Source information:
Conditions: 150 mM KOAc, 10 mM MgCl2 and 150 mM bicine (pH 8.5), 24 C. An RNA of 177 nucleotides, treated with DMS and 2A3 and read out base by base. The 2A3 profile rests on 2,679 reads. 2A3 adducts were read by reverse transcription with SuperScript II with manganese. Values cover nucleotides 27 to 126. For DMS the reverse transcriptase was MarathonRT. The data come from the RNA Mapping Database (RMDB), library M2PK50.
[RMDB]
RNA sequence: GGGAACGACUCGAGUAGAGUCGAAAAUAGGUCGUGUUCGCACGACCUAAGAUAAAUUGCAUAAAAUGCCAGUAACCCGAAACACAAGGGAGUGCACCUGGCCUACGAUGUCGUUCGCGACAUCGAAUCUAUCAAUCGGGUUCGCCCGAUUGAUAGAAAAAGAAACAACAACAACAAC
Reactivity to DMS in 0.01 (KOAc 150mM, MgCl2 10mM, bicine 150mM(pH8.5), 24C), signal-to-noise 3, nucleotides 027 to 126: u010a000g040g000u000c000g050u010g000u010u010c160g020c000a000c000g010a010c010c000u000a020a030g010a060u020a040a080a110u020u000g010c060a040u010a090a110a060a140u010g020c010c010a000g000u000a090a170c000c000c000g010a170a080a200c150a090c170a150a080g000g020g000a180g010u000g000c050a110c270c010u010g000g000c040c210u010a040c020g000a000u000g030u000c010g020u000u000c290g020c010g000a010c000a010u000c000g000a060a030
Reactivity to 2A3 in 0.01 (KOAc 150mM, MgCl2 10mM, bicine 150mM(pH8.5), 24C), signal-to-noise 3, nucleotides 027 to 126: u060a010g020g000u000c010g030u030g040u030u030c190g020c040a000c000g010a000c000c000u010a000a000g000a000u060a010a080a040u160u080g000c020a010u120a250a220a050a070u180g020c010c000a010g010u060a140a120c020c000c010g030a140a230a010c070a010c020a080a020g000g030g020a060g030u060g020c010a030c020c000u000g000g000c000c010u010a040c040g010a010u000g000u000c000g000u020u030c240g000c010g080a000c010a000u010c000g020a030a070